[RMDB]
RNA sequence: GGGAACGACUCGAGUAGAGUCGAAAAGAGGUGGCAUCAAGGCGUCGGUGGACCUGUUCCUGCAGUUCCGCAUCGAGGAUCCGACGCAGUUCAUGUUCGCGCUCGGCGCGGUCUCCGGAUUCUCCGACAAGCUGACCAACGCGGUCAGCGAGGUCACAGAAUACUAGGCAUUCGUGCCUAGUAUUCUAAAAGAAACAACAACAACAAC
Reactivity to 2A3 in 0.01 (KOAc 150mM, MgCl2 10mM, bicine 150mM(pH8.5), 24C), signal-to-noise 3, nucleotides 027 to 156: g120a030g050g020u020g020g010c020a010u030c100a110a060g090g000c040g030u020c010g030g020u020g010g050a040c010c020u030g040u160u160c040c070u090g010c030a020g000u080u020c020c010g040c070a080u140c080g020a020g000g030a030u020c010c010g040a040c050g020c030a020g020u100u110c080a040u150g060u130u130c020g000c000g020c090u140c180g180g000c040g000c000g000g030u020c020u000c000c000g000g000a030u010u030c020u020c030c000g030a020c020a020a010g000c000u000g000a000c010c000a170a080c230g040c140g110g010u000c000a000g020c000g000a010g030g000u030c020a030c010
Reactivity to DMS in 0.01 (KOAc 150mM, MgCl2 10mM, bicine 150mM(pH8.5), 24C), signal-to-noise 2, nucleotides 027 to 156: g020a110g030g020u000g020g030c020a110u000c090a110a100g030g010c050g020u010c060g040g000u000g020g000a100c030c030u010g010u010u000c110c050u040g010c060a080g000u010u000c030c040g030c050a090u000c030g000a090g000g000a060u000c010c000g000a150c080g000c010a070g020u000u000c110a050u010g020u010u010c040g020c040g000c010u000c100g030g010c030g000c010g030g020u000c020u010c060c000g070g010a110u000u000c010u010c020c100g000a090c020a050a230g020c000u000g000a030c010c020a140a180c160g020c120g020g000u000c020a020g010c020g000a020g020g000u000c020a090c230

An RNA of 207 nucleotides, treated with 2A3 and DMS and read out base by base.
2A3 adducts were read by reverse transcription with SuperScript II with manganese.
The RNA was probed in 150 mM KOAc, 10 mM MgCl2 and 150 mM bicine (pH 8.5) at 24 C.
DMS adducts were read by reverse transcription with MarathonRT.
The DMS profile rests on 4,953 reads.
It was measured as part of the RMDB library OK3TST.